Chemical mapping of a 177-nucleotide RNA with DMS and 2A3. DMS adducts were read by reverse transcription with MarathonRT. The 2A3 profile rests on 5,490 reads. It was measured as part of the RMDB library TTRDEL. For DMS, 2,565 sequencing reads were counted.
[RMDB]
RNA sequence: GGGAACGACUCGAGUAGAGUCGAAAAGAUAUGGAUUUUCAGCAACAGCCACCGGUCGGAAACGACCGUGUGGACAUGCUGGAUCCUAAGUCAAAGCAGGUUUGCCGGUUCGCCGGCAAACCUGCAAGUACCAGUAUAUGUUCGCAUAUACUGGUACAAAAGAAACAACAACAACAAC
Reactivity to DMS in 0.01 (KOAc 150mM, MgCl2 10mM, bicine 150mM(pH8.5), 24C), signal-to-noise 2, nucleotides 027 to 126: g000a040u010a270u010g000g000a010u010u000u010u010c000a000g040c000a050a090c250a170g000c010c000a000c000c010g000g010u000c010g010g010a060a080a130c000g000a000c010c010g030u010g030u000g000g000a010c080a060u000g010c000u000g000g000a010u000c000c000u010a020a090g010u000c010a090a120a160g000c000a020g000g010u010u000u000g020c010c000g020g030u000u010c200g010c020c000g010g000c000a000a000a000c000c010u000g010c010a010a020
Reactivity to 2A3 in 0.01 (KOAc 150mM, MgCl2 10mM, bicine 150mM(pH8.5), 24C), signal-to-noise 1, nucleotides 027 to 126: g000a020u100a050u150g010g000a000u050u040u080u300c010a000g010c010a030a090c030a270g080c000c010a010c000c000g020g010u000c000g020g020a050a010a050c000g000a010c000c000g040u080g010u000g000g000a000c000a020u020g020c000u010g000g000a000u000c000c000u020a130a020g010u020c050a090a080a070g000c000a010g020g040u020u010u020g000c030c010g000g070u060u110c270g070c070c000g000g000c000a010a010a000c000c000u000g000c000a000a000